[RMDB]
RNA sequence: GGGAACGACUCGAGUAGAGUCGAAAAGACGGUAAUGAUAAACCGUUCUGCUCAGGUUCAGGCUCCGGCAGGCCUGACGGAUACUGAGUCCGAAUGCCGUUAUCAGAUGAGUGACCAGCUCACGCUUAUAUUAAUUGAACUUCGGUUCAAUUAAUAUAAAAGAAACAACAACAACAAC
Reactivity to 2A3 in 0.01 (KOAc 150mM, MgCl2 10mM, bicine 150mM(pH8.5), 24C), signal-to-noise 5, nucleotides 027 to 126: g010a010c010g000g020u090a210a100u210g180a190u200a120a210a020c000c000g010u080u000c010u010g000c000u010c000a020g160g000u130u020c000a010g000g000c010u050c090c020g020g010c000a000g000g000c000c000u010g000a000c010g020g020a090u180a300c020u000g010a000g020u020c000c020g120a110a060u030g010c000c010g030u020u110a170u150c090a060g130a290u030g010a020g030u070g100a280c070c050a040g020c010u000c000a010c020g020c020u020u020
Reactivity to DMS in 0.01 (KOAc 150mM, MgCl2 10mM, bicine 150mM(pH8.5), 24C), signal-to-noise 4, nucleotides 027 to 126: g010a030c010g000g010u010a100a090u010g010a170u010a100a140a050c010c000g010u000u010c010u000g010c020u000c010a030g010g010u000u000c000a020g010g010c010u000c130c030g000g000c020a060g000g020c020c010u010g020a020c040g020g000a160u010a300c030u000g000a020g000u010c020c030g000a120a060u000g010c020c020g010u010u000a080u020c130a120g010a160u010g000a040g020u000g020a120c170c190a180g010c020u000c010a030c070g010c120u010u010

Structure probing data (2A3 and DMS) for a 177-nucleotide construct. For DMS the reverse transcriptase was MarathonRT. The DMS profile rests on 3,366 reads. Values cover nucleotides 27 to 126.